Chemical mapping of a 177-nucleotide RNA with 2A3 and DMS.
The data come from the RNA Mapping Database (RMDB), library OK1LIB.
The 2A3 profile rests on 3,110 reads.
2A3 adducts were read by reverse transcription with SuperScript II with manganese.
Reactivities are given for positions 27 through 126.
The reactions ran in a buffer of 150 mM KOAc, 10 mM MgCl2 and 150 mM bicine (pH 8.5), at 24 C.
DMS adducts were read by reverse transcription with MarathonRT.
RNA sequence: GGGAACGACUCGAGUAGAGUCGAAAACGCCCAGUAAAGGGAGAGCGCGGCCCAGAUAAAGGGGGCUUUAUCGCUGCUGACGGAGGCAAAAUCCGAGGCAAACAGCGCGCUGGCCAUCUGCUCCAGCCGCUACUCCAGGAUUCGUCCUGGAGUAGCGAAAAGAAACAACAACAACAAC
Reactivity to 2A3 in 0.01 (KOAc 150mM, MgCl2 10mM, bicine 150mM(pH8.5), 24C), signal-to-noise 4, nucleotides 027 to 126: c080g040c000c000c000a050g080u170a020a130a060g030g010g020a020g000a000g010c020g010c000g030g010c030c010c020a020g030a070u170a060a030a010g110g000g000g070g030c000u020u050u010a040u030c030g010c120u030g000c010u010g030a190c010g000g020a020g040g130c130a160a060a020a000u010c010c000g010a010g000g000c020a070a060a080c050a060g010c000g000c010g020c020u000g020g000c030c040a140u070c070u100g010c040u000c000c010a010g010c020
Reactivity to DMS in 0.01 (KOAc 150mM, MgCl2 10mM, bicine 150mM(pH8.5), 24C), signal-to-noise 3, nucleotides 027 to 126: c300g000c020c000c000a210g010u040a000a050a040g000g000g000a070g000a070g000c000g040c160g020g000c000c010c010a090g000a070u010a060a060a040g010g030g010g000g000c020u020u000u000a040u020c010g000c180u000g030c000u040g000a190c050g000g010a030g000g020c250a070a030a080a070u020c000c010g030a300g000g000c100a090a030a120c150a030g000c060g000c070g020c010u010g000g000c300c060a080u040c050u040g000c090u030c000c000a030g000c050